This 177-nucleotide RNA was probed chemically with 2A3 and DMS. Reactivities are given for positions 27 through 126. Reactivities are rounded to 0.1 and cut off at 0 and 3. The reactions ran in a buffer of 150 mM KOAc, 10 mM MgCl2 and 150 mM bicine (pH 8.5), at 24 C. 2A3 adducts were read by reverse transcription with SuperScript II with manganese.
RNA sequence: GGGAACGACUCGAGUAGAGUCGAAAAGAUAUGGAGCUCCUAAGCCGCUUAAGUGGUCGGAAACGACCACGGAGGAACUACGGUAUGGAGCUCCUAAGUCAAAGACGUCCAGUUCGCUGGACGUCAAGAUUUGAGACUGGUUCGCCAGUCUCAAAUCAAAAGAAACAACAACAACAAC
Reactivity to 2A3 in 0.01 (KOAc 150mM, MgCl2 10mM, bicine 150mM(pH8.5), 24C), signal-to-noise 1, nucleotides 027 to 126: g010a010u020a030u110g000g020a010g000c020u030c000c000u090a300a110g010c020c030g180c090u080u030a080a000g010u010g000g030u000c010g000g030a040a030a000c000g000a020c000c000a000c000g000g010a020g000g030a140a100c230u300a030c250g000g000u030a060u060g050g010a000g000c000u000c000c000u000a000a010g000u020c000a000a000a110g000a000c020g000u070c010c000a010g020u050u160c300g080c140u010g000g000a000c010g000u020c000a000a000
Reactivity to DMS in 0.01 (KOAc 150mM, MgCl2 10mM, bicine 150mM(pH8.5), 24C), signal-to-noise 2, nucleotides 027 to 126: g010a020u010a300u000g000g010a040g010c000u020c020c000u010a090a160g030c010c020g010c000u000u010a150a100g010u010g000g000u000c000g000g000a090a020a140c010g000a010c000c010a000c000g010g030a100g000g000a100a050c130u020a260c030g010g000u010a300u030g010g000a000g000c000u000c010c020u000a010a040g000u000c010a090a140a090g000a000c010g000u010c000c000a000g010u010u020c240g020c000u010g010g010a010c010g000u020c000a030a030